This 177-nucleotide RNA was probed chemically with DMS and 2A3. For DMS, 4,518 sequencing reads were counted. For 2A3 the reverse transcriptase was SuperScript II with manganese.

[RMDB]
RNA sequence: GGGAACGACUCGAGUAGAGUCGAAAAGAGAGAAAUACCGCGCGUAAUCAGAGAAAGGACUGUAAGGACGCGAAAUCCUUUCCGUCAUUUACCGCAAGAAAGAGCGAUGUGUGACGAAUAGAGAGAGCAUCCUGAUACCGUUCGCGGUAUCAGGAUGAAAAGAAACAACAACAACAAC
Reactivity to DMS in 0.01 (KOAc 150mM, MgCl2 10mM, bicine 150mM(pH8.5), 24C), signal-to-noise 3, nucleotides 027 to 126: g020a100g010a140g000a060a120a090u000a130c050c100g030c070g050c070g040u000a110a060u010c060a060g010a170g010a020a040a080g000g000a050c020u010g010u010a090a050g010g000a040c000g010c120g000a050a110a170u000c000c000u000u010u000c030c010g000u020c010a030u000u000u000a050c090c000g000c020a060a120g010a100a130a150g020a080g000c000g020a020u000g010u010g000u000g010a110c000g020a070a070u000a040g000a130g000a130g000a100g030
Reactivity to 2A3 in 0.01 (KOAc 150mM, MgCl2 10mM, bicine 150mM(pH8.5), 24C), signal-to-noise 4, nucleotides 027 to 126: g090a000g030a000g020a010a120a020u120a060c010c030g050c000g010c000g040u070a010a130u230c050a010g010a010g010a060a020a020g050g010a010c020u010g070u170a050a080g180g010a030c030g000c010g060a010a050a020u000c000c000u000u000u000c020c000g000u000c000a010u020u040u090a070c010c000g000c030a060a030g120a170a120a010g130a030g020c010g020a080u090g030u000g000u000g040a010c000g000a030a010u130a040g070a000g020a000g000a010g060
The data come from the RNA Mapping Database (RMDB), library OK1LIB. Reactivities are given for positions 27 through 126.